[RMDB]
RNA sequence: GGGAACGACUCGAGUAGAGUCGAAAAAUUUCAAGUAAAGUGACAUUUGAUUCUGCCAAGUACGAGAAAGUGUCUGGUGAGUUGGCUCUUCUUUCUCGCCAAAACGAACAAAUGACAGAAGAAAAACCACUUUAUGCGUGUUCGCACGCAUAAAGUGAAAAGAAACAACAACAACAAC
Reactivity to DMS in 0.01 (KOAc 150mM, MgCl2 10mM, bicine 150mM(pH8.5), 24C), signal-to-noise 1, nucleotides 027 to 126: a100u000u000u000c040a130a110g030u000a070a100a070g000u010g000a070c070a030u000u010u000g000a210u000u000c040u000g010c040c010a070a080g040u000a080c070g000a100g000a020a020a070g010u000g010u010c040u000g020g030u000g040a060g020u010u010g020g000c100u010c050u030u030c020u000u000u000c000u000c010g060c210c030a010a030a080a060c100g020a040a070c040a110a060a080u000g000a050c080a070g020a070a020g000a060a050a030a150a130c240
Reactivity to 2A3 in 0.01 (KOAc 150mM, MgCl2 10mM, bicine 150mM(pH8.5), 24C), signal-to-noise 1, nucleotides 027 to 126: a020u100u140u070c030a060a010g090u130a230a090a080g130u050g010a000c000a020u050u030u020g150a250u150u030c000u050g060c070c050a110a050g040u050a080c040g000a000g050a060a000a020g040u010g030u070c110u100g060g030u070g050a050g020u050u110g100g030c080u040c000u150u000c000u000u060u000c000u020c030g000c020c010a090a160a000a020c030g010a030a010c010a020a030a050u040g040a030c030a060g100a120a020g030a040a070a010a000a020c010